[RMDB]
Record summary:
Chemical mapping of a 177-nucleotide RNA with DMS and 2A3. DMS adducts were read by reverse transcription with MarathonRT. The reactions ran in a buffer of 150 mM KOAc, 10 mM MgCl2 and 150 mM bicine (pH 8.5), at 24 C. The DMS profile rests on 7,873 reads. Values cover nucleotides 27 to 126.
RNA sequence: GGGAACGACUCGAGUAGAGUCGAAAACUUGAUUUUCUUCUUCGCCUUCCGGAGCUCCUUCUCGAGAUCCUCAGCUUUUUUCCUUGAGUUCACCCACUGCUCGAGGACGUCUUCCCUUCCCCCGCGACUACGUAUUUAUGUUCGCAUAAAUACGUAGAAAAGAAACAACAACAACAAC
Reactivity to DMS in 0.01 (KOAc 150mM, MgCl2 10mM, bicine 150mM(pH8.5), 24C), signal-to-noise 5, nucleotides 027 to 126: c070u000u010g000a110u010u000u000u010c030u000u000c040u010u000c070g020c050c050u000u010c030c040g010g010a150g020c060u000c030c030u000u000c040u000c040g010a130g000a080u000c030c020u010c060a090g010c020u000u000u000u000u000u000c020c030u010u000g010a080g000u000u000c090a110c040c020c040a140c070u000g010c000u000c010g010a030g010g000a070c060g010u000c110u010u000c000c010c000u000u010c000c000c010c040c050g020c200g010a150
Reactivity to 2A3 in 0.01 (KOAc 150mM, MgCl2 10mM, bicine 150mM(pH8.5), 24C), signal-to-noise 5, nucleotides 027 to 126: c000u040u080g050a060u140u030u090u030c010u080u000c000u050u060c030g030c020c010u050u060c030c030g030g010a030g030c010u020c000c000u080u060c040u020c030g070a070g020a070u040c010c000u030c020a020g020c010u060u070u030u010u070u090c010c000u030u040g040a030g030u060u050c020a070c020c010c000a050c020u010g010c000u000c010g000a010g000g030a120c010g010u000c080u030u040c000c000c000u000u030c010c000c000c000c000g020c000g010a010